[RMDB]
The record gives the reactivity of an RNA of 177 nucleotides to 2A3 and DMS.
RNA sequence: GGGAACGACUCGAGUAGAGUCGAAAAGAUAUGGAGUCAUCGCAAGGCCGGCUCUCGGAAACGAGAGAAGGCUGAUGACCGAGUGACUCCUAAGUCAAAUCGGCGAAAACUUCGGUUUUCGCCGAAACAUUUACCCAACGUUCGCGUUGGGUAAAUGAAAAGAAACAACAACAACAAC
Reactivity to 2A3 in 0.01 (KOAc 150mM, MgCl2 10mM, bicine 150mM(pH8.5), 24C), signal-to-noise 2, nucleotides 027 to 126: g020a030u050a030u080g000g000a000g020u000c000a000u010c020g020c090a170a240g040g000c020c020g040g080c020u000c000u000c020g000g020a040a040a030c010g000a000g000a000g010a030a020g000g000c020u010g020a100u060g010a010c030c010g000a040g300u080g020a000c000u000c000c000u010a050a000g020u030c020a000a030a210u050c000g020g020c010g030a000a010a000a000c050u110u180c300g080g000u040u000u010u000c000g000c000c000g000a000a000a000
Reactivity to DMS in 0.01 (KOAc 150mM, MgCl2 10mM, bicine 150mM(pH8.5), 24C), signal-to-noise 3, nucleotides 027 to 126: g000a030u000a180u010g000g000a040g010u000c000a020u010c000g000c030a040a160g010g000c000c000g010g000c020u000c000u000c010g010g000a040a070a080c010g000a010g000a010g010a020a050g010g020c010u000g010a040u030g010a110c300c000g000a030g000u000g010a010c000u010c000c000u010a020a090g000u010c010a040a100a160u000c000g000g010c000g000a020a000a000a020c000u000u000c210g020g000u000u000u000u000c000g020c010c000g000a010a010a060
The RNA was probed in 150 mM KOAc, 10 mM MgCl2 and 150 mM bicine (pH 8.5) at 24 C. For DMS, 3,287 sequencing reads were counted.